[RMDB]
RNA sequence: GGGAACGACUCGAGUAGAGUCGAAAAACACCGUGCAAAAAGCACGGAAGAGUCGUGCAAAGGAGAGGCUCGACAGAUGCACGACAAAGCGAGCCUACAAAAGACAGCGGGAAAACCGCUGUCGAAACGUGAUGUUGCAGUUCGCUGCAGCAUCACGAAAAGAAACAACAACAACAAC
Reactivity to 2A3 in 0.01 (KOAc 150mM, MgCl2 10mM, bicine 150mM(pH8.5), 24C), signal-to-noise 8, nucleotides 027 to 126: a000c050a030c000c000g000u000g010c020a070a150a110a220a080g000c000a000c000g000g000a020a020g030a000g000u010c000g000u000g000c020a070a090a100g150g060a200g050a020g030g010c000u010c010g030a030c030a040g140a060u090g010c010a010c020g030a010c050a030a040a000g070c010g020a010g000c000c000u060a070c060a030a100a000a000g000a000c000a000g000c000g010g000g040a030a200a040a090c000c000g000c000u000g000u000c000g000a010a000a000
Reactivity to DMS in 0.01 (KOAc 150mM, MgCl2 10mM, bicine 150mM(pH8.5), 24C), signal-to-noise 5, nucleotides 027 to 126: a070c120a100c020c000g000u010g000c000a070a060a100a140a130g010c000a010c000g010g010a040a030g020a110g000u000c000g000u030g010c020a060a150a110g010g000a140g010a060g000g000c010u000c000g010a180c080a100g000a120u020g030c030a040c060g000a080c020a070a070a070g000c050g020a000g000c010c000u010a080c180a050a050a080a060g000a000c000a010g000c000g020g000g000a100a030a100a120c000c000g000c000u010g000u000c000g000a020a050a100